[RMDB]
RNA sequence: GGGAACGACUCGAGUAGAGUCGAAAAGACGCCUUUAGAAAAAGAGGCUAGGGGGUAUUCCGGUGUGGGAUACUUAGUAAUAUGCAACGCUAAUUGCAUAAGAUUGUAGGACGGAAUUUACAGUCUUUAGAGAUAAGCACGUUCGCGUGCUUAUCAACAAUCGUUAAAGUUUCGACUUUAACGAUUGAAAAGAAACAACAACAACAAC
Reactivity to DMS in 0.01 (KOAc 150mM, MgCl2 10mM, bicine 150mM(pH8.5), 24C), signal-to-noise 2, nucleotides 027 to 156: g010a150c150g030c000c000u000u000u020a080g010a120a110a180a230a140g000a040g020g020c000u000a050g010g010g030g010g000u000a040u000u010c020c020g000g030u000g040u000g010g070g010a040u000a030c040u020u010a070g030u000a120a140u000a020u010g000c000a080a050c070g000c090u000a110a150u000u000g020c000a060u000a030a050g000a080u000u000g020u000a040g020g020a180c030g020g020a110a300u020u010u010a040c010a070g010u000c010u000u000u000a100g000a150g000a040u000a010a020g000c020a010c000g040u000u000c300g030c060g070u000g000c010u000u000a000u010c010a070a190
Reactivity to 2A3 in 0.01 (KOAc 150mM, MgCl2 10mM, bicine 150mM(pH8.5), 24C), signal-to-noise 5, nucleotides 027 to 156: g040a010c050g030c020c000u060u040u050a240g130a140a220a000a050a010g020a010g000g000c000u030a080g020g020g040g010g010u020a040u030u050c050c060g130g080u250g040u180g060g040g000a020u020a020c010u030u020a020g030u060a050a090u020a030u110g000c000a030a010c050g020c180u140a080a070u100u020g000c000a010u010a060a010g050a030u030u080g020u030a000g020g060a030c080g020g060a070a030u100u060u060a040c010a000g020u000c000u040u040u060a100g030a000g000a060u000a000a000g000c000a000c010g010u050u100c220g000c000g080u010g000c000u000u000a000u010c000a000a010
An RNA of 207 nucleotides, treated with DMS and 2A3 and read out base by base. Conditions: 150 mM KOAc, 10 mM MgCl2 and 150 mM bicine (pH 8.5), 24 C. The 2A3 profile rests on 3,680 reads.